[RMDB]
RNA sequence: GGGAACGACUCGAGUAGAGUCGAAAACGACAGCCCGCAGCUUAUGCGAGGGGCGGGGUGUGCUCGCCUGUAGUCCCUGCCGUACGACCCGAAGCCGGGCGAUCUAGGCGGGGGCAGGGUGAAGCGGCACUAGUCAACACUUCGGUGUUGACUAGUGAAAAGAAACAACAACAACAAC
Reactivity to DMS in 0.01 (KOAc 150mM, MgCl2 10mM, bicine 150mM(pH8.5), 24C), signal-to-noise 2, nucleotides 027 to 126: c060g000a160c060a080g030c000c000c000g030c010a170g000c050u000u020a140u020g050c240g010a100g000g010g000g010c070g000g000g000g000u010g030u000g000c020u010c040g010c000c000u000g010u000a030g010u010c000c000c010u000g030c010c010g000u010a140c090g000a220c030c000c020g030a190a210g030c180c010g020g000g000c020g000a090u020c080u000a200g020g010c020g030g000g000g000g040c000a010g000g000g020u000g000a040a030g020c000g020g000
Reactivity to 2A3 in 0.01 (KOAc 150mM, MgCl2 10mM, bicine 150mM(pH8.5), 24C), signal-to-noise 2, nucleotides 027 to 126: c030g060a000c010a020g120c010c000c030g000c020a030g020c050u180u220a140u300g130c140g020a050g070g080g000g060c000g000g010g000g060u090g060u090g010c010u010c030g000c000c000u000g000u070a070g030u000c000c000c000u000g010c000c000g060u120a050c010g180a300c050c010c000g050a120a020g100c140c020g050g010g000c030g010a010u050c060u140a100g000g000c010g000g000g010g000g010c010a020g010g020g000u000g000a090a000g050c000g000g040
Chemical mapping of a 177-nucleotide RNA with DMS and 2A3.
The RNA was probed in 150 mM KOAc, 10 mM MgCl2 and 150 mM bicine (pH 8.5) at 24 C.
For 2A3, 1,423 sequencing reads were counted.